[RMDB]
RNA sequence: GGGAACGACUCGAGUAGAGUCGAAAAAUAGAGGCGCUUUGCCUCCUCGGUGGCCGUGGGACGCCUUAUGUCAUAGCGCGCGAUGGCCUCCUCAAGGGUGAGGCCGUCCACUCUUCUCACCUCGGUGCUCGUAGCAACUGUUCGCAGUUGCUACGAGAAAAGAAACAACAACAACAAC
Reactivity to 2A3 in 0.01 (KOAc 150mM, MgCl2 10mM, bicine 150mM(pH8.5), 24C), signal-to-noise 2, nucleotides 027 to 126: a000u170a040g020a010g030g000c020g010c160u140u110u140g030c000c000u020c000c020u040c060g100g000u040g060g000c060c020g030u150g010g050g030a060c010g000c020c000u080u120a130u090g110u050c040a060u070a060g020c030g020c020g000c080g060a020u040g000g020c030c020u000c000c000u030c050a100a140g100g000g040u240g000a010g000g020c020c000g010u000c000c030a070c010u000c020u040u000c010u000c010a050c000c000u030c050g040g060u110g070
Reactivity to DMS in 0.01 (KOAc 150mM, MgCl2 10mM, bicine 150mM(pH8.5), 24C), signal-to-noise 1, nucleotides 027 to 126: a070u010a080g020a060g040g000c040g000c180u020u000u000g020c030c010u010c050c060u010c130g000g010u000g020g000c000c040g030u010g020g010g030a100c040g020c050c020u020u010a050u010g000u000c090a050u000a020g010c060g020c040g030c160g010a050u000g000g010c000c030u010c000c000u000c100a100a140g010g000g000u000g000a000g010g010c010c000g020u000c030c070a140c070u000c060u000u000c050u000c000a130c060c060u020c040g000g000u000g020